Conditions: 150 mM KOAc, 10 mM MgCl2 and 150 mM bicine (pH 8.5), 24 C. Chemical mapping of a 177-nucleotide RNA with 2A3 and DMS. For 2A3 the reverse transcriptase was SuperScript II with manganese. The data come from the RNA Mapping Database (RMDB), library RFM100. The 2A3 profile rests on 1,025 reads.
[RMDB]
RNA sequence: GGGAACGACUCGAGUAGAGUCGAAAACGCGCUAGGUUUGGUCGCCUAGGGGAUGGAGAUAUGGAAAGGGUCUCGUGUGCUGUCAGUCGGUCGAAAGACGCGCUUGCAACAUGGGCCUAUAACCGGAACGCCCAACAUUUUUCGAAAUGUUGGGCGUAAAAGAAACAACAACAACAAC
Reactivity to 2A3 in 0.01 (KOAc 150mM, MgCl2 10mM, bicine 150mM(pH8.5), 24C), signal-to-noise 2, nucleotides 027 to 126: c110g000c030g010c020u000a000g010g030u110u020u080g140g000u070c050g000c010c000u050a050g050g000g000g000a060u070g040g070a080g070a120u140a090u290g010g020a020a080a120g030g000g040u000c020u040c090g000u000g000u000g020c040u010g000u050c030a050g000u040c020g070g000u000c000g030a110a070a060g030a010c010g000c010g000c300u060u050g000c010a060a030c000a050u010g000g030g000c000c010u030a040u030a020a000c000c000g040g000a030
Reactivity to DMS in 0.01 (KOAc 150mM, MgCl2 10mM, bicine 150mM(pH8.5), 24C), signal-to-noise 1, nucleotides 027 to 126: c040g000c070g010c040u000a000g060g000u020u000u000g000g000u020c160g060c040c000u000a040g010g000g010g060a040u000g000g000a090g000a180u000a090u040g000g060a080a120a240g060g000g000u060c040u040c070g000u000g000u000g000c080u010g000u010c300a010g000u020c080g010g010u000c000g000a110a090a090g000a000c030g000c020g020c000u000u000g010c020a010a000c000a010u000g040g040g010c000c030u010a000u020a110a090c060c000g030g010a300

For DMS, 1,470 sequencing reads were counted.